An RNA of 177 nucleotides, treated with DMS and 2A3 and read out base by base. The reactions ran in a buffer of 150 mM KOAc, 10 mM MgCl2 and 150 mM bicine (pH 8.5), at 24 C.
RNA sequence: GGGAACGACUCGAGUAGAGUCGAAAACCACGAUCCUCCAUCGGCAUGAUCAUGAUGUGUUCUCAAAUAUCAGGCCAGUAAAUCACCAUGCUCGUGCUGGUAAAGGCUGGAGGGCUUGGGUUGGCCCGACAUGAUUUGACUUCGGUCAAAUCAUGUCAAAAGAAACAACAACAACAAC
Reactivity to DMS in 0.01 (KOAc 150mM, MgCl2 10mM, bicine 150mM(pH8.5), 24C), signal-to-noise 5, nucleotides 027 to 126: c010c010a070c080g000a090u010c000c000u000c000c000a020u020c040g020g000c000a020u000g000a010u010c010a030u000g000a060u020g010u010g000u000u000c020u010c030a090a100a110u030a100u010c090a070g000g000c030c060a090g000u020a030a080a080u020c020a010c020c000a010u000g010c080u000c010g020u000g000c010u000g010g010u010a080a110a110g020g000c170u010g000g010a030g020g010g000c040u000u000g010g010g000u000u000g000g010c010c000c020
Reactivity to 2A3 in 0.01 (KOAc 150mM, MgCl2 10mM, bicine 150mM(pH8.5), 24C), signal-to-noise 9, nucleotides 027 to 126: c000c000a030c050g030a220u030c000c010u000c000c000a050u060c020g010g000c010a010u010g010a010u020c000a010u010g040a090u100g050u010g050u150u040c090u030c060a140a180a050u220a130u120c070a050g070g090c080c010a030g030u130a010a100a050u070c000a010c010c000a000u010g010c000u010c010g010u010g000c000u010g000g030u060a140a100a020g180g050c100u050g010g010a010g000g010g000c010u040u080g060g000g000u030u080g060g010c000c000c010